Structure probing data (2A3 and DMS) for a 177-nucleotide construct. The reactions ran in a buffer of 150 mM KOAc, 10 mM MgCl2 and 150 mM bicine (pH 8.5), at 24 C. Reactivities are given for positions 27 through 126. The data come from the RNA Mapping Database (RMDB), library RFMREP. DMS adducts were read by reverse transcription with MarathonRT. The 2A3 profile rests on 7,441 reads.
[RMDB]
RNA sequence: GGGAACGACUCGAGUAGAGUCGAAAAUGGAGCUGUGGAGUGUGACAAUGGUGUUUGUAUCCAAUCCGUCAAACGCCAUUAUCACACUAAAUAGCUACUGAAAGUUCAGGGCUUCGGCCCUGAACAACGUCUAACUUAGGUUCGCCUAAGUUAGACGAAAAGAAACAACAACAACAAC
Reactivity to 2A3 in 0.01 (KOAc 150mM, MgCl2 10mM, bicine 150mM(pH8.5), 24C), signal-to-noise 3, nucleotides 027 to 126: u110g020g010a020g000c000u000g000u020g020g010a030g000u000g000u010g010a010c020a010a000u010g000g000u000g010u020u000u010g040u050a080u070c050c060a050a110u090c090c060g070u030c020a000a000a000c000g000c000c000a010u000u010a010u000c010a000c000a000c000u000a000a000a000u000a000g020c000u050a130c010u010g060a130a090a020g000u000u000c000a010g020g010g000c020u060u150c280g110g000c010c010c000u000g000a000a000c000a000a000
Reactivity to DMS in 0.01 (KOAc 150mM, MgCl2 10mM, bicine 150mM(pH8.5), 24C), signal-to-noise 4, nucleotides 027 to 126: u000g000g010a010g020c000u000g020u000g010g010a100g010u000g000u000g020a020c020a010a010u000g000g020u000g010u000u000u000g000u020a060u010c040c080a120a090u010c190c300g000u000c010a000a000a020c000g030c000c000a000u000u000a030u000c000a010c010a000c000u000a020a060a010u000a000g000c000u000a050c030u010g010a100a100a110g000u000u000c000a000g010g010g000c000u000u000c230g020g020c000c000c000u000g000a010a010c000a050a080